[RMDB]
The record gives the reactivity of an RNA of 207 nucleotides to 2A3.
RNA sequence: GGGAACGACUCGAGUAGAGUCGAAAAGAUCAAGUGUAGAAAUAAAAAUGUUAACCAAAAGUCCUUUGAUCCACAAAUAAAGGUAGUAUUCAUUAUUCAUUUUUGGAUAACUUCAGAAAGGCAAGAAUUUGGUACAGAAAGAACUGUAACCAUUUAACUAUAAAUGAGGCUUCGGCCUCAUUUAUAGAAAAGAAACAACAACAACAAC
Reactivity to 2A3 in 0.01 (KOAc 150mM, MgCl2 10mM, bicine 150mM(pH8.5), 24C), signal-to-noise 1, nucleotides 027 to 156: g050a000u000c030a000a020g050u050g070u180a050g050a000a140a090u230a010a040a050a020a030u070g010u030u030a000a000c010c000a000a000a000a000g030u010c010c000u030u030u010g000a040u010c000c040a050c030a040a130a000u250a060a060a060g040g000u060a000g010u000a030u080u050c010a010u030u080a160u180u010c050a080u140u130u020u300u030g000g010a010u300a010a100c060u020u060c040a040g110a060a050a040g000g000c000a000a000g170a130a070u290u030u010g010g000u050a010c000a000g060a110a300a000g070a030a030c000u000g000u040a000a110c000c020a010u060u110u070a020a020
The 2A3 profile rests on 412 reads. It was measured as part of the RMDB library OK3TST.